Chemical mapping of a 177-nucleotide RNA with 2A3 and DMS. DMS adducts were read by reverse transcription with MarathonRT. Conditions: 150 mM KOAc, 10 mM MgCl2 and 150 mM bicine (pH 8.5), 24 C. For DMS, 4,557 sequencing reads were counted.

RNA sequence: GGGAACGACUCGAGUAGAGUCGAAAAUUAAUGGCAUGCGGUAUUCAAAGUGAGCGUGCAACAUAUGAAUUCGAUCAUUAUAAAUCAAGUAAGAAGGCACCGUUUAAGACGAAUUUAAACCUUAUUAUCCUCAUUCUACAUUCGUGUAGAAUGAGGAAAAAGAAACAACAACAACAAC
Reactivity to 2A3 in 0.01 (KOAc 150mM, MgCl2 10mM, bicine 150mM(pH8.5), 24C), signal-to-noise 5, nucleotides 027 to 126: u060u020a020a020u030g040g000c030a010u010g000c030g160g100u210a190u110u240c110a100a060a050g170u100g100a110g000c030g010u030g010c010a010a050c000a000u160a040u170g010a020a030u030u040c060g220a230u020c070a070u080u250a050u110a200a070a030u140c020a090a000g130u130a110a090g100a010a080g120g000c040a050c030c060g040u010u040u050a090a030g040a000c000g000a000a020u040u060u070a140a100a030c000c000u090u170a140u140u120a150
Reactivity to DMS in 0.01 (KOAc 150mM, MgCl2 10mM, bicine 150mM(pH8.5), 24C), signal-to-noise 3, nucleotides 027 to 126: u040u020a110a100u030g030g020c070a030u010g000c070g040g040u000a040u020u040c220a080a110a120g030u020g010a190g030c000g050u040g000c000a070a030c100a110u040a050u010g000a020a040u000u000c010g010a140u000c000a060u040u010a070u020a100a070a120u010c130a030a080g010u000a040a050g020a080a040g000g010c070a050c040c080g030u010u010u020a010a080g000a060c010g020a010a030u040u000u000a000a070a120c090c020u000u030a060u020u000a110